[RMDB]
RNA sequence: GGGAACGACUCGAGUAGAGUCGAAAACGUGAACAUCGCUCUGCUAAGUCCCGUCGUUCUUCCAGUCAGAGCGAGAUUGUAAGCAACCUUAUGCGCAAUGAAGACAUAGAGGGACUUCUGGAUCAAGAUCGCUAUUAGCUUUCGAGCUAAUAGCGAUAAAAGAAACAACAACAACAAC
Reactivity to 2A3 in 0.01 (KOAc 150mM, MgCl2 10mM, bicine 150mM(pH8.5), 24C), signal-to-noise 3, nucleotides 027 to 126: c150g140u190g140a030a010c010a080u020c000g020c000u010c000u000g120c090u030a030a000g090u060c000c030c000g130u060c050g040u020u040c000u030u000c030c000a080g080u070c020a040g020a000g000c070g000a010g000a020u090u010g040u110a140a040g000c030a030a080c070c020u100u130a030u080g010c060g020c040a030a060u110g060a080a060g050a010c010a030u180a050g110a100g020g000g000a010c000u030u000c070u080g030g000a040u130c040a060a020g000
Reactivity to DMS in 0.01 (KOAc 150mM, MgCl2 10mM, bicine 150mM(pH8.5), 24C), signal-to-noise 2, nucleotides 027 to 126: c090g000u000g010a170a110c090a170u000c000g000c000u000c030u000g000c150u020a060a050g010u000c040c020c020g030u020c070g000u000u000c000u000u010c000c080a040g030u000c020a020g000a020g000c010g020a050g020a000u000u000g030u000a070a210g040c030a070a090c110c160u000u000a060u020g020c080g000c040a050a040u040g000a110a060g020a070c060a090u010a070g020a080g030g050g000a090c000u020u000c080u010g000g000a150u020c110a060a110g000